RNA sequence: GGGAACGACUCGAGUAGAGUCGAAAAAGUUCACAGUCAAACAAGCAAGAUUGAGAAUUAACCUUGGUUUUGAACUUGAACACUUAGGGGAUUGAAGAUUCAACAACCCUAAAGCUUGGGGUAAAACCAUCUGCAACCUAUUCGUAGGUUGCAGAUGAAAAGAAACAACAACAACAAC
Reactivity to 2A3 in 0.01 (KOAc 150mM, MgCl2 10mM, bicine 150mM(pH8.5), 24C), signal-to-noise 6, nucleotides 027 to 126: a000g020u030u020c040a050c110a030g020u020c010a030a050a080c010a060a030g090c030a100a070g040a090u070u170g100a100g080a190a150u190u110a100a060c020c000u030u010g130g020u120u050u030u020g030a030a030c000u000u010g010a020a000c020a010c090u020u030a010g020g010g010g000a020u040u030g060a130a060g170a300u170u090c010a030a030c010a020a110c020c000c000u040a060a040a000g040c040u040u110g040g000g000g050u070a060a060a000a000c000
Reactivity to DMS in 0.01 (KOAc 150mM, MgCl2 10mM, bicine 150mM(pH8.5), 24C), signal-to-noise 3, nucleotides 027 to 126: a060g010u000u000c010a050c150a070g020u000c020a040a050a120c170a040a130g020c160a120a110g000a050u000u000g020a100g000a050a020u000u020a050a210c300c010u010u010g030g000u000u010u010u000g010a050a060c030u000u010g010a000a040c020a100c130u000u010a010g000g000g000g000a170u010u000g000a030a220g000a150u020u000c040a020a010c080a090a240c000c000c010u000a010a010a070g010c090u000u000g000g000g020g000u010a030a040a050a050c170